[RMDB]
RNA sequence: GGGAACGACUCGAGUAGAGUCGAAAAAUGCCUUCUGCGAGGCCACGGGGGUACCCUACAAGAGCUUUGACAGAGUGGCAAAGAUCCAUGUCUGCGGGGAUGAUGGUUUCCUGAUUACUGAAAGAGCGUGUUCACCAUCUUUCGAGAUGGUGAACACAAAAGAAACAACAACAACAAC
Reactivity to DMS in 0.01 (KOAc 150mM, MgCl2 10mM, bicine 150mM(pH8.5), 24C), signal-to-noise 1, nucleotides 027 to 126: a170u000g000c010c010u000u000c030u000g030c030g000a000g000g010c000c040a200c140g030g010g000g000g040u040a110c030c010c000u000a050c160a120a130g000a070g000c010u000u000u010g000a180c040a030g020a040g000u020g000g020c000a030a010a090g010a100u000c000c030a040u010g000u010c010u000g010c160g000g020g020g000a060u000g000a050u000g000g000u000u000u000c020c030u010g020a150u000u010a170c080u000g000a110a080a100g000a080g040c260
Annotation: The data come from the RNA Mapping Database (RMDB), library OK2TRN. An RNA of 177 nucleotides, treated with DMS and read out base by base. The reactions ran in a buffer of 150 mM KOAc, 10 mM MgCl2 and 150 mM bicine (pH 8.5), at 24 C. DMS (dimethyl sulfate) methylates the pairing face of unpaired adenines and cytosines.